[RMDB]
This 177-nucleotide RNA was probed chemically with 2A3 and DMS. The reactions ran in a buffer of 150 mM KOAc, 10 mM MgCl2 and 150 mM bicine (pH 8.5), at 24 C. It was measured as part of the RMDB library TTRDES.
RNA sequence: GGGAACGACUCGAGUAGAGUCGAAAAGAUAUGGAUGUCAUAGGGAGAGCCUACUCGGAAACGAGUAGAGCUCAUCGAUCUAUGUACAUCCUAAGUCAAAAGUGUGGAAUACUUCGGUAUUCCACACGACGACACGAUUGUUCGCAAUCGUGUCGUCAAAAGAAACAACAACAACAAC
Reactivity to 2A3 in 0.01 (KOAc 150mM, MgCl2 10mM, bicine 150mM(pH8.5), 24C), signal-to-noise 1, nucleotides 027 to 126: g000a000u030a000u040g000g000a010u020g000u010c000a000u000a000g040g000g000a100g020a000g040c020c000u000a000c000u000c010g020g000a020a010a000c000g000a000g000u010a000g010a010g010c020u010c010a010u070c030g020a020u030c020u000a000u010g040u080a010c000a010u020c000c010u000a000a000g010u030c000a010a040a150a220g000u000g000u040g010g000a020a000u000a020c000u060u120c300g120g020u010a000u010u040c050c000a000c020a000c010
Reactivity to DMS in 0.01 (KOAc 150mM, MgCl2 10mM, bicine 150mM(pH8.5), 24C), signal-to-noise 1, nucleotides 027 to 126: g000a020u000a030u000g000g000a010u000g020u010c000a000u000a010g000g000g020a020g020a030g010c010c000u000a000c000u000c000g000g000a040a000a030c000g000a020g010u000a010g000a070g030c010u010c000a150u010c210g010a040u000c000u000a010u000g020u030a010c010a010u000c000c000u000a000a040g000u020c000a180a150a080a200g020u020g030u000g000g000a030a020u000a010c010u000u030c200g050g010u000a000u000u000c000c000a000c000a000c000